[RMDB]
RNA sequence: GGGAACGACUCGAGUAGAGUCGAAAAGAUAUGGACGUUCACACUGUCCGAAGAACAUGCUUGACAAGAGAGUCGGAAACGACUCUCUUGUCAAGCAUGGGAGGACUGUGUGAGACGUCCUAAGUCACAAAAUACCAUAGUUCGCUAUGGUAUUUUGAAAAGAAACAACAACAACAAC
Reactivity to DMS in 0.01 (KOAc 150mM, MgCl2 10mM, bicine 150mM(pH8.5), 24C), signal-to-noise 3, nucleotides 027 to 126: g010a070u000a300u000g010g000a010c010g010u000u000c010a010c000a010c020u000g010u010c000c010g020a110a190g010a160a220c000a010u000g020c010u010u000g000a030c000a030a000g000a040g010a030g040u020c000g010g000a100a080a200c010g010a020c000u000c000u000c010u000u000g000u000c000a000a020g000c010a000u000g000g000g010a120g000g000a020c000u000g010u010g020u000g000a050g010a010c000g010u010c000c000u000a000a080g010u010c040a270